[RMDB]
RNA sequence: GGGAACGACUCGAGUAGAGUCGAAAAGCGAUGUGCUCGGUGGAGGGCGGCAUGGAGAUCGAAGAGGUAGCGGCCACCAAACCCGAGCGGCUCGCCAAAGUCCCGGUGAAUGCCGUCAAGGGCGUUGAGAUAUACUUAGCUUCGGCUAAGUAUAUCUAAAAGAAACAACAACAACAAC
Reactivity to DMS in 0.01 (KOAc 150mM, MgCl2 10mM, bicine 150mM(pH8.5), 24C), signal-to-noise 7, nucleotides 027 to 126: g010c010g010a020u010g030u010g010c010u000c010g000g000u000g000g010a300g000g010g000c070g010g020c010a030u010g020g020a110g000a030u000c010g000a140a120g010a250g000g010u010a050g010c030g000g000c000c010a080c010c000a010a160a210c170c010c010g010a030g010c000g010g010c040u000c020g000c000c040a060a100a190g000u010c000c010c020g030g020u000g000a040a030u000g010c010c010g000u000c280a140a160g010g000g000c020g010u000u000g010
Reactivity to 2A3 in 0.01 (KOAc 150mM, MgCl2 10mM, bicine 150mM(pH8.5), 24C), signal-to-noise 4, nucleotides 027 to 126: g000c010g000a040u120g020u030g130c010u020c000g000g020u040g020g060a050g050g050g020c150g010g020c050a100u140g110g040a290g020a150u050c030g050a170a080g060a120g170g010u020a020g080c030g030g000c000c000a010c000c000a000a060a000c000c000c000g000a000g000c000g000g010c010u000c000g000c000c000a060a070a060g040u030c000c000c000g000g030u100g130a080a030u070g000c020c030g060u190c160a100a090g120g020g010c070g010u040u110g060
Notes: Chemical mapping of a 177-nucleotide RNA with DMS and 2A3. The DMS profile rests on 8,560 reads. It was measured as part of the RMDB library OK2TST.